This 177-nucleotide RNA was probed chemically with 2A3 and DMS. The DMS profile rests on 926 reads. Reactivities are given for positions 27 through 126. DMS (dimethyl sulfate) methylates the pairing face of unpaired adenines and cytosines.

RNA sequence: GGGAACGACUCGAGUAGAGUCGAAAAGAAUGGUAACCACGGCCGCUAGGCUUAUAUAACGGCACUUCGGCAUUACCUUCACACCUGACGUAAAAGAAUGAUGGCGUACUAUUAUUAAAUCGCGGCCAACUGACUUGAGGUUCGCCUCAAGUCAGUUAAAAGAAACAACAACAACAAC
Reactivity to 2A3 in 0.01 (KOAc 150mM, MgCl2 10mM, bicine 150mM(pH8.5), 24C), signal-to-noise 1, nucleotides 027 to 126: g010a020a030u230g030g000u070a070a000c040c040a110c080g090g000c000c010g030c050u010a040g000g010c000u100u000a180u000a030u020a200a050c000g060g080c030a020c240u000u010c030g060g010c020a000u000u060a030c000c000u040u000c050a030c050a050c010c020u050g040a080c110g100u140a060a160a020a040g150a150a020u160g060a010u130g040g010c050g030u080a050c010u020a030u250u010a010u080u130a090a100a040u080c080g030c030g070g030c020c000
Reactivity to DMS in 0.01 (KOAc 150mM, MgCl2 10mM, bicine 150mM(pH8.5), 24C), signal-to-noise 2, nucleotides 027 to 126: g010a020a020u010g000g040u010a060a100c280c130a150c220g010g010c010c010g020c070u000a100g000g010c110u020u000a060u000a120u010a070a090c100g010g020c010a030c030u000u010c080g030g000c080a150u000u000a030c010c000u000u000c010a060c140a090c030c050u000g000a120c120g000u010a060a040a070a090g010a020a100u030g010a060u000g000g010c170g010u010a050c110u000a030u000u000a080u010u010a010a080a070u000c080g000c060g020g010c040c030